[RMDB]
RNA sequence: GGGAACGACUCGAGUAGAGUCGAAAAAGUGAGCUGAGAUCGAGCCACUGCACUCCAGCCUGGGCGACAGAGCAAGACUGUGUCUCAAAAAAAAAAAAAGAAAAAGAAAUAAUGAUUAGUGGCCCGACAACCUAAAUAUAUUCGUAUAUUUAGGUUGAAAAGAAACAACAACAACAAC
Reactivity to DMS in 0.01 (KOAc 150mM, MgCl2 10mM, bicine 150mM(pH8.5), 24C), signal-to-noise 7, nucleotides 027 to 126: a030g000u010g010a110g010c020u010g000a120g000a090u010c070g010a120g000c000c000a020c010u000g000c090a090c050u010c030c040a100g010c060c030u000g000g000g000c040g010a090c050a030g000a090g010c120a080a060g010a090c030u000g000u010g000u010c020u000c000a010a000a000a000a000a000a000a000a030a050a100a100a120g020a060a040a040a050a070g010a110a070a090u030a070a040u010g000a090u010u010a070g010u000g010g000c000c020c010g010a180
Reactivity to 2A3 in 0.01 (KOAc 150mM, MgCl2 10mM, bicine 150mM(pH8.5), 24C), signal-to-noise 4, nucleotides 027 to 126: a000g080u080g020a060g000c020u010g030a020g000a220u100c060g020a010g000c010c000a020c020u050g010c050a050c030u010c030c010a030g020c000c010u060g000g030g010c030g030a040c010a030g070a010g040c060a050a060g080a110c020u010g020u010g080u030c010u020c040a050a030a010a010a000a000a000a000a000a000a000a000a030g100a090a110a060a040a010g070a040a130a020u170a030a070u070g010a010u020u050a020g020u000g030g030c000c030c030g010a050